The record gives the reactivity of an RNA of 177 nucleotides to 2A3 and DMS. The reactions ran in a buffer of 150 mM KOAc, 10 mM MgCl2 and 150 mM bicine (pH 8.5), at 24 C. 2A3 adducts were read by reverse transcription with SuperScript II with manganese.

[RMDB]
RNA sequence: GGGAACGACUCGAGUAGAGUCGAAAAGGAAUCUAAGACCAUAGGAAGUGCCGACUUUAAACAGCAGCUGCUGGUCUCCUUUGCAAGUGUCCAUCCUUCGACCAUAACCUUUGUGGUUUGGUCUUGGACGAUCCUCGAGAUUCGUCUCGAGGAUCGUAAAAGAAACAACAACAACAAC
Reactivity to 2A3 in 0.01 (KOAc 150mM, MgCl2 10mM, bicine 150mM(pH8.5), 24C), signal-to-noise 3, nucleotides 027 to 126: g020g010a090a000u090c050u140a090a020g000a040c020c030a080u050a010g000g070a090a030g030u010g050c050c000g040a080c120u010u040u180a160a170a010c050a070g030c000a000g020c030u020g000c010u000g020g020u000c020u000c000c000u040u000u070g010c080a110a020g080u080g030u160c000c000a010u010c020c000u050u090c060g000a000c010c000a070u160a210a030c020c000u100u080u270g210u300g060g000u010u020u030g000g000u040c000u000u010g000g000
Reactivity to DMS in 0.01 (KOAc 150mM, MgCl2 10mM, bicine 150mM(pH8.5), 24C), signal-to-noise 2, nucleotides 027 to 126: g000g060a190a070u020c100u050a150a100g000a030c040c000a070u040a100g000g010a030a100g000u000g020c030c030g010a090c090u020u000u000a060a120a110c160a020g000c010a020g000c040u030g010c110u000g000g000u000c000u000c000c020u000u010u000g000c100a040a140g010u020g020u000c010c010a070u000c040c120u010u000c250g000a050c000c010a000u110a010a020c020c000u000u030u050g020u070g000g000u000u040u000g000g010u000c000u000u000g020g000